Annotation: Structure probing data (2A3) for a 207-nucleotide construct. Source: RMDB library OK3TST, as collected in RNAgym. For 2A3, 432 sequencing reads were counted. The reactions ran in a buffer of 150 mM KOAc, 10 mM MgCl2 and 150 mM bicine (pH 8.5), at 24 C. For 2A3 the reverse transcriptase was SuperScript II with manganese. As a SHAPE reagent, 2A3 marks flexible, mostly unpaired nucleotides at the ribose 2'-OH.
[RMDB]
RNA sequence: GGGAACGACUCGAGUAGAGUCGAAAAGUCAGGAUAGUAAGGGCAUGGAGCAAGGCGUGAGGCAGAUCGUGAACGAUAUGUUCACCGAGGCUUUGAGCCAAAACGGGCGCAUUGCGAAGUUCGUCAAUGAGAAAACGAGGAGUUAGUAGUGGAUUCCGCCUCCCAUCCAAUUCGUUGGAUGGGAGGCAAAAGAAACAACAACAACAAC
Reactivity to 2A3 in 0.01 (KOAc 150mM, MgCl2 10mM, bicine 150mM(pH8.5), 24C), signal-to-noise 1, nucleotides 027 to 156: g160u100c010a000g140g000a120u060a100g010u070a050a210g020g010g010c030a020u010g010g010a040g000c010a000a020g020g020c060g100u270g020a060g000g110c010a010g030a050u000c000g000u020g020a000a000c030g030a180u100a090u300g000u000u000c030a030c000c060g000a020g000g000c000u160u150u150g120a000g010c010c000a140a000a000a000c030g020g040g040c010g000c000a010u020u020g020c130g070a080a040g130u220u090c020g020u050c100a040a010u070g040a040g000a180a010a000a000c080g030a040g050g000a010g000u080u060a000g010u000a010g010u020g010g000a070u090u050c020c000